[RMDB]
An RNA of 177 nucleotides, treated with DMS and read out base by base.
Source: RMDB library M2PK50, as collected in RNAgym.
The RNA was probed in 150 mM KOAc, 10 mM MgCl2 and 150 mM bicine (pH 8.5) at 24 C.
Reactivities are given for positions 27 through 126.

RNA sequence: GGGAACGACUCGAGUAGAGUCGAAAAGAAGAUGUGUUCGCACAUCUUCAAAAGCAACGACUAGGACCGGCGAGACAAAGGACCGAUAGCUAAUCGCGACGUAAACAGGCCUCUUCGGAGGCCUGAAGACGACAAUACACUUCGGUGUAUUGUCGUCAAAAGAAACAACAACAACAAC
Reactivity to DMS in 0.01 (KOAc 150mM, MgCl2 10mM, bicine 150mM(pH8.5), 24C), signal-to-noise 1, nucleotides 027 to 126: g030a010a010g000a010u000g010u000g000u020u000c270g000c010a020c000a000u000c000u020u000c000a010a090a080a150g010c110a090a010c110g000a000c070u000a060g010g050a020c020c060g010g020c100g000a140g020a220c110a090a130a130g000g010a100c100c030g000a050u000a090g000c040u000a070a100u000c000g020c080g040a090c140g000u000a060a020a240c030a000g000g000c010c010u000c000u000u070c150g000g000a050g080g000c000c000u000g000a040a040